[RMDB]
Conditions: 150 mM KOAc, 10 mM MgCl2 and 150 mM bicine (pH 8.5), 24 C. An RNA of 207 nucleotides, treated with 2A3 and read out base by base. Reactivities are rounded to 0.1 and cut off at 0 and 3. It was measured as part of the RMDB library OK3TST.

RNA sequence: GGGAACGACUCGAGUAGAGUCGAAAACAAACACUCAAUGAUCCAAGUGUUAAAUUUAGCUAAGGAAGUGAAAUUUAACGAAGUUAUGCACAAAGCUGGUGCGUACUACGGCAUCGAAGUGGUCGCUGACGGCGAUAGCAUUGGUACUUACUACAUCGACCGUGGUCGGGUUCGCCCGACCACGGUCAAAAGAAACAACAACAACAAC
Reactivity to 2A3 in 0.01 (KOAc 150mM, MgCl2 10mM, bicine 150mM(pH8.5), 24C), signal-to-noise 1, nucleotides 027 to 156: c060a000a050a000c050a010c050u090c030a040a140u020g000a020u060c020c010a070a010g040u020g010u110u020a010a000a000u080u080u090a010g020c030u020a030a180g190g080a200a070g080u040g060a010a060a060u010u000u030a010a010c010g010a020a020g060u100u050a000u050g020c010a000c050a060a120a020g120c110u070g080g020u040g010c040g000u000a000c010u020a040c070g020g000c030a070u040c030g120a060a040g000u020g000g050u070c070g000c070u080g010a040c010g010g050c000g010a040u020a020g010c060a090u010u060g070g000u010a020c010u040u040a020c010u010a010c010a060u090c060